[RMDB]
RNA sequence: GGGAACGACUCGAGUAGAGUCGAAAAUCAUGCACGUUCGCGUGCAUGAAAAGGCGGCGAGUAUCGCUCAGCGGCGCGCUACAGCGCGCAGCGCUGCUGGAAAAAGAUGAAUCUUCGGAUUCAUCAACGACUUGAUCUAGUUCGCUAGAUCAAGUCGAAAAGAAACAACAACAACAAC
Reactivity to 2A3 in 0.01 (KOAc 150mM, MgCl2 10mM, bicine 150mM(pH8.5), 24C), signal-to-noise 1, nucleotides 027 to 126: u040c000a000u000g000c000a010c000g040u060u050c210g010c000g100u020g000c010a000u000g020a000a020a000a000g060g020c040g010g010c070g030a040g080u120a080u300c020g000c040u030c050a010g010c000g020g000c010g000c020g020c020u140a200c070a170g030c040g000c000g000c040a030g000c030g000c030u000g000c030u040g040g030a070a050a010a050a030g010a000u020g010a000a000u010c020u000u080c300g060g000a000u000u030c000a000u020c000a010a010
Reactivity to DMS in 0.01 (KOAc 150mM, MgCl2 10mM, bicine 150mM(pH8.5), 24C), signal-to-noise 2, nucleotides 027 to 126: u000c000a000u000g000c000a000c000g020u000u010c220g030c000g020u010g000c000a010u000g020a000a050a100a190g010g020c030g000g040c010g000a170g010u000a110u010c030g010c020u000c050a060g030c010g040g020c000g000c010g040c030u020a070c280a140g030c110g020c070g020c010a020g000c030g030c020u000g020c120u000g000g000a020a060a080a170a080g010a000u000g020a020a000u000c000u010u030c240g020g000a010u000u010c010a000u000c000a100a130